[RMDB]
RNA sequence: GGGAACGACUCGAGUAGAGUCGAAAAACCUCAGUCUUCGGACUGAGGUGAGCGGAGCAUGGUGGCCGUGGGUACUCCUCCUUGGUGACAAGGGCCCACGGGGUGCGGCACGCUUCGGCGUGCCGAACAAAGUACCCAUAUUCGUAUGGGUACUUUGAAAAGAAACAACAACAACAAC
Reactivity to 2A3 in 0.01 (KOAc 150mM, MgCl2 10mM, bicine 150mM(pH8.5), 24C), signal-to-noise 4, nucleotides 027 to 126: a000c000c000u000c000a000g000u000c000u030u130c220g140g000a000c000u000g000a010g000g000u000g000a030g020c060g030g020a040g030c100a100u130g090g090u130g080g110c000c000g000u010g000g000g000u060a110c060u060c060c010u040c010c010u020u030g030g010u100g020a050c010a010a000g000g000g000c000c010c000a000c000g020g000g010g010u100g030c010g000g000c020a000c020g000c010u020u040c180g080g010c010g000u000g000c010c010g000a010a000
Reactivity to DMS in 0.01 (KOAc 150mM, MgCl2 10mM, bicine 150mM(pH8.5), 24C), signal-to-noise 7, nucleotides 027 to 126: a030c000c000u000c000a000g010u000c000u000u010c200g020g010a020c000u000g010a000g010g010u000g000a040g010c080g000g000a090g010c090a070u000g010g010u010g010g010c010c000g020u000g000g010g010u000a070c130u010c080c070u000c010c010u000u000g000g000u020g000a200c020a020a010g000g000g000c000c000c000a010c020g000g010g010g010u010g010c000g000g000c000a010c000g010c000u000u010c120g020g010c010g020u000g000c000c000g000a020a080

Chemical mapping of a 177-nucleotide RNA with 2A3 and DMS. For 2A3, 11,227 sequencing reads were counted. For 2A3 the reverse transcriptase was SuperScript II with manganese.